The record gives the reactivity of an RNA of 207 nucleotides to DMS and 2A3.
For 2A3, 948 sequencing reads were counted.
For DMS, 4,211 sequencing reads were counted.
The reactions ran in a buffer of 150 mM KOAc, 10 mM MgCl2 and 150 mM bicine (pH 8.5), at 24 C.
[RMDB]
RNA sequence: GGGAACGACUCGAGUAGAGUCGAAAAUUGAAAUUGCACCGUCCUGUUAUCGAAAGAUAGGCAGAAGAUACGAAAUGUGUGACAGCAUGGGAAGUAAAGGCAGACCGUGGUUCCCUUGAGUAUCUUAAUUAGGGGGACGAGUUCGCUCGUCCCCCAACUACCUGUGUUAGUUCGCUAACACAGGUAGAAAAGAAACAACAACAACAAC
Reactivity to DMS in 0.01 (KOAc 150mM, MgCl2 10mM, bicine 150mM(pH8.5), 24C), signal-to-noise 2, nucleotides 027 to 156: u000u000g020a080a120a070u010u000g000c000a100c010c010g020u000c040c010u020g050u010u000a050u000c050g010a190a170a260g000a050u000a060g000g000c030a050g010a060a060g000a060u000a030c040g010a060a070a080u010g030u010g030u000g010a080c110a140g010c000a020u000g010g020g010a060a130g020u000a030a060a120g000g030c060a070g020a190c030c040g020u010g010g000u000u000c000c010c010u000u000g010a170g000u000a060u010c050u000u000a070a140u000u000a180g020g030g000g070g040a040c010g010a050g030u000u010c200g040c000u000c020g020u000c000c000c000c000c000a010a010
Reactivity to 2A3 in 0.01 (KOAc 150mM, MgCl2 10mM, bicine 150mM(pH8.5), 24C), signal-to-noise 2, nucleotides 027 to 156: u060u090g040a040a000a030u070u120g020c010a010c080c000g030u050c000c010u020g030u080u020a050u050c050g020a000a070a010g020a020u050a060g070g000c020a020g010a080a020g010a020u040a020c050g000a020a020a060u070g010u010g050u050g040a030c030a010g030c040a050u040g000g000g000a050a010g040u150a140a070a080g150g030c010a020g040a070c000c000g040u050g000g050u010u010c010c010c000u000u010g010a020g040u030a020u050c000u000u030a150a170u050u210a220g020g020g000g000g000a010c000g010a010g010u120u150c270g000c100u010c000g000u010c020c000c000c000c020a000a000